[RMDB]
RNA sequence: GGGAACGACUCGAGUAGAGUCGAAAAACGGGUCCUGCUUAGGAGAAAAGAAAAACGUCUUACAGCCAGUGUCUAAACUCCAAACAACGGAAUGUAUCAAUGAGACCUUGUAUAUGGAUACACGUGCCUUCAUAUUAGGCUUCGGCCUAAUAUGAAGAAAAGAAACAACAACAACAAC
Reactivity to DMS in 0.01 (KOAc 150mM, MgCl2 10mM, bicine 150mM(pH8.5), 24C), signal-to-noise 2, nucleotides 027 to 126: a060c110g000g000g010u000c010c010u000g000c060u000u010a080g030g000a060g000a060a060a140a120g010a060a040a040a050a120c270g010u010c020u000u010a110c160a120g000c090c060a050g000u000g000u000c020u010a040a130a170c030u000c040c050a030a070a090c150a040a140c100g000g000a070a070u000g020u000a100u010c040a090a060u000g000a070g010a050c020c030u000u000g030u000a030u000a080u000g020g000a030u000a030c030a040c170g010u020g010c160
Reactivity to 2A3 in 0.01 (KOAc 150mM, MgCl2 10mM, bicine 150mM(pH8.5), 24C), signal-to-noise 2, nucleotides 027 to 126: a000c040g010g010g070u030c010c000u020g040c020u030u110a070g050g040a060g050a070a230a050a060g110a040a140a020a020a000c060g060u020c010u040u030a020c050a020g020c020c000a030g010u000g010u110c010u040a000a080a190c020u010c040c000a070a090a060c030a060a000c040g030g020a050a050u050g030u050a060u090c050a090a060u150g030a060g040a070c010c020u010u070g020u040a120u020a010u130g070g000a010u020a080c050a010c030g030u040g000c000